An RNA of 177 nucleotides, treated with 2A3 and DMS and read out base by base.
For DMS the reverse transcriptase was MarathonRT.
RNA sequence: GGGAACGACUCGAGUAGAGUCGAAAACGUAGUAAUCGCGCGAAAAUCACGUGAAAUAAUCAGAGGAAUCGUUUGAAAUCAUCGUAGUAAUCGCGCGAAAAUCACGUGAAAUAAUCAGAGGAAUCGUGCUUAUUAUGGUGUUCGCACCAUAAUAAGCAAAAGAAACAACAACAACAAC
Reactivity to 2A3 in 0.01 (KOAc 150mM, MgCl2 10mM, bicine 150mM(pH8.5), 24C), signal-to-noise 1, nucleotides 027 to 126: c020g000u100a020g010u020a070a040u020c010g010c000g000c010g020a020a000a000a040u040c000a010c000g000u040g030a020a040a020u220a040a060u080c030a010g000a020g120g190a120a110u110c070g100u000u040u040g030a050a070a010u000c000a000u140c070g010u000a090g000u000a120a030u000c010g000c000g000c000g000a000a010a010a000u050c000a000c000g010u000g030a040a040a040u260a020a090u130c120a000g060a040g200g110a050a080u130c070g050u070
Reactivity to DMS in 0.01 (KOAc 150mM, MgCl2 10mM, bicine 150mM(pH8.5), 24C), signal-to-noise 2, nucleotides 027 to 126: c000g000u000a130g030u000a060a250u000c020g000c020g000c000g000a000a020a200a190u000c020a000c000g010u020g000a030a100a090u000a070a050u000c070a080g040a020g020g020a160a110u000c130g010u000u020u000g020a020a110a140u010c000a050u000c050g000u000a060g000u000a050a270u000c020g020c000g030c000g020a020a030a090a080u000c000a020c000g050u000g000a110a120a140u020a090a080u030c110a030g010a040g000g010a060a040u000c070g000u000